[RMDB]
The record gives the reactivity of an RNA of 177 nucleotides to 2A3 and DMS.
It was measured as part of the RMDB library TTRDEL.
For 2A3, 1,675 sequencing reads were counted.
2A3 is a SHAPE reagent: it acylates the 2'-hydroxyl of flexible nucleotides of all four kinds.
The RNA was probed in 150 mM KOAc, 10 mM MgCl2 and 150 mM bicine (pH 8.5) at 24 C.
RNA sequence: GGGAACGACUCGAGUAGAGUCGAAAAGAUAUGGACUUCGAAGAACGUACUUGUGUCGAUGAAAUCGGAAACGAUGGAGACAUGUACGGGAGAAGUCCUAAGUCAAAGCUGCUGUUCGCAGCAGCAAGAUGCAAGCUCACUUCGGUGAGCUUGCAUCAAAAGAAACAACAACAACAAC
Reactivity to 2A3 in 0.01 (KOAc 150mM, MgCl2 10mM, bicine 150mM(pH8.5), 24C), signal-to-noise 1, nucleotides 027 to 126: g030a030u050a030u120g000g000a000c000u030u020c020g220a290a060g020a050a060c000g010u010a000c050u150u300g020u000g000u100c010g270a300u050g060a020a010a000u000c020g010g000a060a000a060c030g000a000u010g030g020a060g010a000c000a000u040g000u000a020c010g000g010g020a000g010a020a000g000u010c010c000u000a050a040g010u010c040a140a000a000g020c000u000g000c000u020g090u060u080c300g000c090a000g000c010a000g050c000a000a010
Reactivity to DMS in 0.01 (KOAc 150mM, MgCl2 10mM, bicine 150mM(pH8.5), 24C), signal-to-noise 1, nucleotides 027 to 126: g000a110u000a300u000g000g000a000c000u000u010c000g000a070a120g010a140a250c010g020u000a000c010u000u000g000u020g010u000c030g010a090u000g000a180a190a030u000c020g000g000a110a080a230c010g060a010u000g020g000a100g000a000c000a010u000g000u000a000c000g000g000g010a110g000a010a000g010u010c000c000u010a010a060g000u000c030a070a110a120g000c010u010g010c010u010g000u000u010c140g050c090a030g030c000a000g010c000a100a020